RNA sequence: GGGAACGACUCGAGUAGAGUCGAAAAGAAGAAACGUCUUUGAAGGAGACGUCACAGCCAGCAUUAUCAACUUUCACCUUAGGCAAAACAGAAUUCGUGAAGCCAGAGAAGCCAUCGAGCUCCUAUGUUACUACUAUGAGGAAGAAAUAGCCCUCGCAGUGGAGGAAUAAUUCGUUAUUCCUCCACUAAAAGAAACAACAACAACAAC
Reactivity to DMS in 0.01 (KOAc 150mM, MgCl2 10mM, bicine 150mM(pH8.5), 24C), signal-to-noise 2, nucleotides 027 to 156: g020a140a180g030a130a080a070c000g000u020c010u000u000u000g020a240a190g010g000a020g040a000c050g010u000c070a080c080a130g040c020c050a100g000c050a090u000u010a090u000c100a060a090c070u000u000u010c020a060c000c020u000u000a110g020g010c010a030a080a050a160c050a120g000a100a220u000u010c090g020u010g020a090a070g010c020c020a180g020a160g000a050a050g020c030c020a130u000c110g020a070g040c030u000c000c000u010a110u000g000u010u000a050c020u000a050c060u000a060u000g010a030g000g000a100a160g010a050a050a120u000a090g030c020c030c000u010c010g000c300
Reactivity to 2A3 in 0.01 (KOAc 150mM, MgCl2 10mM, bicine 150mM(pH8.5), 24C), signal-to-noise 3, nucleotides 027 to 156: g050a040a010g040a040a110a000c020g000u000c010u010u110u140g080a090a040g100g030a030g010a020c010g000u030c020a020c030a050g090c040c030a030g000c040a070u070u080a070u190c020a060a050c030u010u080u050c050a080c000c030u030u060a050g020g000c000a050a060a050a000c050a040g200a130a090u140u110c050g030u040g090a050a010g010c010c020a010g030a010g010a120a010g030c000c010a040u040c040g030a040g010c000u030c020c020u140a120u140g070u070u100a070c020u030a040c020u020a070u170g000a010g040g030a040a080g030a020a130a000u080a040g000c000c010c000u000c020g010c010